[RMDB]
RNA sequence: GGGAACGACUCGAGUAGAGUCGAAAAGCUCGCGUGCCAACCAGAUGUGUUGUGGCGUCAACAUAGGGAUAAGGCCUGCAUAACAGCGCGUAACUGAGCAGGAAGACAACUGACCGAACAGCCAUUGCACUGGACCCAUUUUCGAAUGGGUCCAGUGAAAAGAAACAACAACAACAAC
Reactivity to DMS in 0.01 (KOAc 150mM, MgCl2 10mM, bicine 150mM(pH8.5), 24C), signal-to-noise 1, nucleotides 027 to 126: g010c030u000c050g000c070g000u000g050c050c050a070a120c090c060a150g040a090u000g010u000g000u000u000g010u000g010g010c070g010u000c040a020a040c110a070u010a080g000g000g000a060u000a080a060g000g010c000c010u000g020c020a080u000a050a130c060a070g000c020g020c200g000u030a090a120c050u000g000a120g000c020a050g000g000a110a060g000a140c100a030a050c050u010g000a090c000c020g000a120a070c050a020g000c050c020a100u000u000g000
Reactivity to 2A3 in 0.01 (KOAc 150mM, MgCl2 10mM, bicine 150mM(pH8.5), 24C), signal-to-noise 1, nucleotides 027 to 126: g000c020u040c070g000c060g090u210g040c010c020a030a050c000c000a030g090a300u090g040u020g020u000u080g060u050g050g090c060g110u040c020a000a050c000a050u080a060g050g060g040a060u080a190a040g000g060c000c010u010g100c000a060u050a170a070c040a070g000c030g000c040g190u050a090a060c020u000g040a000g120c010a030g010g010a010a110g150a000c060a070a000c070u040g020a000c000c050g040a090a030c000a000g060c000c030a110u190u100g070
Chemical mapping of a 177-nucleotide RNA with DMS and 2A3. Source: RMDB library OK2TRN, as collected in RNAgym. The DMS profile rests on 906 reads. DMS (dimethyl sulfate) methylates the pairing face of unpaired adenines and cytosines. Values cover nucleotides 27 to 126. For 2A3, 697 sequencing reads were counted.